RNA sequence: GGGAACGACUCGAGUAGAGUCGAAAAAGCUGAGGUGCGUGAGCUGGAGCGCCGACUGGUGUAAUCCUACGCUCUUACGCGCCUGCACUACGGCGUGACGAUGUCAUAAGUCGGUGCAUCGCACGUAUCUGCUCCGGAGAGAGACUGUCCUUGAACACUGUUCCUUAACGUUCGCGUUAAGGAACAGAAAAGAAACAACAACAACAAC
Reactivity to 2A3 in 0.01 (KOAc 150mM, MgCl2 10mM, bicine 150mM(pH8.5), 24C), signal-to-noise 3, nucleotides 027 to 156: a000g060c070u070g020a010g020g000u000g000c000g000u010g010a000g000c000u000g020g000a030g060c020g020c020c010g220a290c260u300g000g000u000g020u020a070a080u000c000c000u010a040c090g000c000u000c000u130u220a040c020g000c000g020c030c000u000g000c010a010c070u120a040c050g020g020c000g000u000g040a130c010g020a030u050g060u090c030a030u130a240a130g100u130c160g080g010u170g010c000a000u000c000g020c010a000c000g020u020a100u030c040u070g010c000u020c000c040g100g000a040g000a020g010a020g000a090c040u070g030u030c010c000u130u100g080a040a010c090a030
Reactivity to DMS in 0.01 (KOAc 150mM, MgCl2 10mM, bicine 150mM(pH8.5), 24C), signal-to-noise 1, nucleotides 027 to 156: a130g010c070u000g030a180g040g040u000g010c030g050u030g020a090g020c030u010g020g010a080g020c040g030c050c110g020a060c120u000g000g000u000g030u010a070a090u000c030c020u000a060c100g010c010u000c020u000u000a030c000g040c030g030c000c080u000g010c010a040c070u000a090c130g030g000c000g010u010g000a170c020g000a040u010g010u010c020a090u000a070a140g010u010c100g050g060u010g030c000a040u000c020g030c010a020c000g000u010a040u010c030u000g000c000u000c030c030g010g000a200g000a110g010a180g020a150c040u000g000u040c000c040u000u000g020a090a150c070a210